[RMDB]
Chemical mapping of a 177-nucleotide RNA with 2A3 and DMS.
RNA sequence: GGGAACGACUCGAGUAGAGUCGAAAAUGCGUGUGUGGGCGUGUGUGUCCAUCAGUCAGUGGGCGUGCACCAGGCCAGGCCUCAGUGCUGAGAGGCAGCGUGAACCAUGCGGGGCCCCACCGUGUGGGUCACUUUCUAAGUUCGCUUAGAAAGUGACAAAAGAAACAACAACAACAAC
Reactivity to 2A3 in 0.01 (KOAc 150mM, MgCl2 10mM, bicine 150mM(pH8.5), 24C), signal-to-noise 9, nucleotides 027 to 126: u120g000c030g000u060g010u050g020u120g050g040g010c040g010u030g000u010g010u020g010u010c030c020a050u100c040a070g300u100c020a020g010u040g000g000g010c020g010u020g000c010a020c030c030a030g070g070c020c020a040g040g020c000c000u050c040a070g070u120g210c080u120g090a070g010a020g150g000c010a000g010c010g020u040g060a030a040c000c000a010u020g010c000g000g010g030g040c010c000c000c000a010c000c000g000u020g000u010g000g040
Reactivity to DMS in 0.01 (KOAc 150mM, MgCl2 10mM, bicine 150mM(pH8.5), 24C), signal-to-noise 9, nucleotides 027 to 126: u000g010c030g020u000g010u010g030u000g010g010g020c070g020u000g020u000g010u000g010u000c010c010a030u010c090a110g010u010c210a130g010u000g000g000g010c020g020u000g010c020a040c030c200a150g010g010c030c040a120g010g010c010c010u010c030a110g010u010g010c100u010g000a130g010a070g010g010c010a170g010c040g010u000g010a110a300c010c010a010u000g000c020g000g000g000g010c030c010c010c060a150c010c010g010u000g020u000g000g000
DMS adducts were read by reverse transcription with MarathonRT. For 2A3 the reverse transcriptase was SuperScript II with manganese. Source: RMDB library OK2TST, as collected in RNAgym. The RNA was probed in 150 mM KOAc, 10 mM MgCl2 and 150 mM bicine (pH 8.5) at 24 C.